An RNA of 207 nucleotides, treated with 2A3 and DMS and read out base by base. The reactions ran in a buffer of 150 mM KOAc, 10 mM MgCl2 and 150 mM bicine (pH 8.5), at 24 C. 2A3 adducts were read by reverse transcription with SuperScript II with manganese.
RNA sequence: GGGAACGACUCGAGUAGAGUCGAAAAUCUAAAUCCGGAACUCAGUUACAUGCAUGUGAGCUGGGGCAGUGUGGCCCAGCUCUUGACUUGCUGCUAGUCUCUACCAUGGCAUGGUAGUGCUCCCAUCACUACCAUGAUGAGAGGACCCAGAGGAGAGACUCCAACUAUUCUUCGGAAUAGUUGGAGUAAAAGAAACAACAACAACAAC
Reactivity to 2A3 in 0.01 (KOAc 150mM, MgCl2 10mM, bicine 150mM(pH8.5), 24C), signal-to-noise 2, nucleotides 027 to 156: u080c050u070a080a030a050u030c050c020g050g110a090a010c050u060c060a070g030u110u170a020c020a050u130g030c010a010u080g010u010g060a020g000c000u000g020g020g050g000c080a110g060u100g060u130g180g050c000c000c010a000g040c000u000c000u010u050g040a010c000u000u020g030c000u030g020c000u040a010g020u060c010u010c010u080a120c030c030a060u100g050g000c010a010u010g000g000u010a020g000u000g000c000u080c020c000c000a030u160c010a000c000u010a010c000c000a000u000g000a020u070g030a080g020a020g020g050a020c050c020c030a030g010a030g000g040a020g000a040g030
Reactivity to DMS in 0.01 (KOAc 150mM, MgCl2 10mM, bicine 150mM(pH8.5), 24C), signal-to-noise 2, nucleotides 027 to 156: u000c070u000a060a030a120u000c040c020g040g070a060a170c030u010c070a070g020u000u010a070c040a090u010g010c030a070u000g020u010g030a020g040c000u010g020g050g050g020c020a120g040u010g070u000g010g000c000c000c010a070g000c010u000c000u000u010g010a110c030u000u000g020c010u000g010c020u030a100g020u000c010u010c020u010a130c030c020a100u030g000g000c000a200u010g010g000u000a060g010u010g000c080u000c010c020c020a300u000c010a030c000u010a090c050c020a080u020g020a040u020g010a140g010a150g030g010a110c010c010c010a120g010a070g020g010a140g000a200g020